Chemical mapping of a 177-nucleotide RNA with 2A3 and DMS. It was measured as part of the RMDB library M2PK50. The reactions ran in a buffer of 150 mM KOAc, 10 mM MgCl2 and 150 mM bicine (pH 8.5), at 24 C. As a SHAPE reagent, 2A3 marks flexible, mostly unpaired nucleotides at the ribose 2'-OH. DMS adducts were read by reverse transcription with MarathonRT. The 2A3 profile rests on 7,077 reads.
RNA sequence: GGGAACGACUCGAGUAGAGUCGAAAAACCUCAGUCUUCGGACUGAGGUGAGCGGAGCAUGGUGGCCGUGGGAACUCCUCCUUGGUGACAAGGGCCGACGGGGUGCGGCACGCUUCGGCGUGCCGAAGUGAAUCAUACUGUUCGCAGUAUGAUUCACAAAAGAAACAACAACAACAAC
Reactivity to 2A3 in 0.01 (KOAc 150mM, MgCl2 10mM, bicine 150mM(pH8.5), 24C), signal-to-noise 2, nucleotides 027 to 126: a000c010c000u010c010a000g000u000c000u030u130c210g150g000a000c010u010g010a010g010g000u010g000a040g020c030g000g000a020g030c060a090u120g090g020u080g090g000c020c010g050u070g010g040g020a030a040c020u010c020c000u060c000c000u020u030g010g000u070g030a050c020a040a020g030g000g000c040c040g020a030c040g020g000g000g010u060g050c000g000g000c000a000c000g000c000u040u070c200g060g000c010g000u010g000c000c000g010a010a000
Reactivity to DMS in 0.01 (KOAc 150mM, MgCl2 10mM, bicine 150mM(pH8.5), 24C), signal-to-noise 4, nucleotides 027 to 126: a030c000c010u000c000a010g010u000c000u000u020c240g020g010a010c000u010g000a010g000g000u000g000a040g010c060g010g000a110g020c090a080u000g020g020u010g020g020c040c030g020u010g010g000g000a090a070c090u000c020c030u000c020c010u010u000g000g010u010g000a140c040a040a040g000g000g020c040c030g000a070c090g000g000g000g000u000g010c010g000g000c010a010c000g010c000u000u020c110g020g010c010g020u000g010c000c000g000a010a060